[RMDB]
RNA sequence: GGGAACGACUCGAGUAGAGUCGAAAAGGAGGGUUACAAAACGGCCGAAGAAGUCUCCACCUUGCUCAUCGGCACUUAUGUCGGCCUCUGGUCGACUAGGGUCGACAGCCCUUCGUCAGCUCCAGUACAUUAACGUUUUCGGCCGGAACCGGAGGUGUGAAGGUUAGUAAUUCGUUACUAACCUUCAAAAAGAAACAACAACAACAAC
Reactivity to DMS in 0.01 (KOAc 150mM, MgCl2 10mM, bicine 150mM(pH8.5), 24C), signal-to-noise 3, nucleotides 027 to 156: g020g040a040g010g030g020u000u010a200c090a070a070a140a110c020g000g040c000c010g030a040a120g020a050a100g000u000c040u010c020c040a060c040c040u000u000g000c010u000c050a140u000c000g030g050c010a090c040u000u010a020u000g030u000c000g000g000c010c010u000c090u010g040g050u000c030g010a030c000u000a020g000g040g050u000c020g000a100c060a130g010c030c010c010u020u000c040g020u000c060a060g020c030u010c020c010a100g030u010a100c110a100u000u000a080a090c050g000u000u000u000u000c010g010g000c020c010g020g010a050a050c020c060g000g010a040g010g020u000g010
Reactivity to 2A3 in 0.01 (KOAc 150mM, MgCl2 10mM, bicine 150mM(pH8.5), 24C), signal-to-noise 3, nucleotides 027 to 156: g020g000a030g030g000g010u060u130a080c050a040a070a060a040c030g000g010c010c010g010a030a020g100a070a020g050u060c040u010c090c010a050c010c010u070u100g080c050u050c070a040u030c030g000g040c070a090c170u040u090a070u300g010u010c000g000g020c020c030u100c110u190g000g010u030c000g000a020c000u030a010g030g010g000u010c000g010a020c010a010g000c010c000c000u000u040c020g030u040c030a020g010c010u030c040c000a020g060u130a090c040a150u170u170a150a020c040g020u020u010u040u070c020g000g010c000c030g010g010a040a020c030c040g090g050a020g030g020u060g050

An RNA of 207 nucleotides, treated with DMS and 2A3 and read out base by base. For 2A3, 2,591 sequencing reads were counted. It was measured as part of the RMDB library OK3TST.